[RMDB]
Background:
This 170-nucleotide RNA was probed chemically with 2A3 and DMS. Values cover nucleotides 27 to 129. It was measured as part of the RMDB library 15KLIB.
RNA sequence: GGGAACGACUCGAGUAGAGUCGAAAAGUGCUCACACUAGACAACCAGGACCUUAAUGGCAAGUGGUAUGAUUUUGGUGACUUCGUAAUCACUCAACCUGGUUCAGGAGUAGCUAUAGUUGAUAGCUUAACUUAUGACUUCGGUCAUAAGAAAAGAAACAACAACAACAAC
Reactivity to 2A3 in 0.01 (KOAc 150mM, MgCl2 10mM, bicine 150mM(pH8.5), 24C), signal-to-noise 9, nucleotides 027 to 129: g070u060g020c010u020c020a100c000a030c070u090a050g040a110c040a040a010c010c010a000g010g040a060c030c060u150u260a180a040u220g070g030c090a080a040g020u010g020g010u050a030u070g080a080u050u060u100u110g200g040u160g090a040c020u020u010c040g040u030a090a100u070c010a000c020u080c040a030a100c000c000u000g000g000u020u010c000a020g010g040a040g020u060a030g040c010u030a030u060a140g040u010u040g060a100u060a040g010c000u020u020a030a020
Reactivity to DMS in 0.01 (KOAc 150mM, MgCl2 10mM, bicine 150mM(pH8.5), 24C), signal-to-noise 9, nucleotides 027 to 129: g000u000g040c040u000c100a100c060a190c080u010a120g010a140c220a060a000c030c030a040g010g030a300c030c040u000u040a080a080u050g000g000c300a100a040g020u000g050g020u000a070u000g020a080u010u010u000u010g020g010u080g000a020c070u030u020c040g000u010a050a090u000c010a000c000u000c150a070a080c000c050u020g030g050u030u020c060a040g020g010a080g000u050a010g030c020u000a010u020a100g030u040u030g020a110u030a060g010c010u000u000a030a140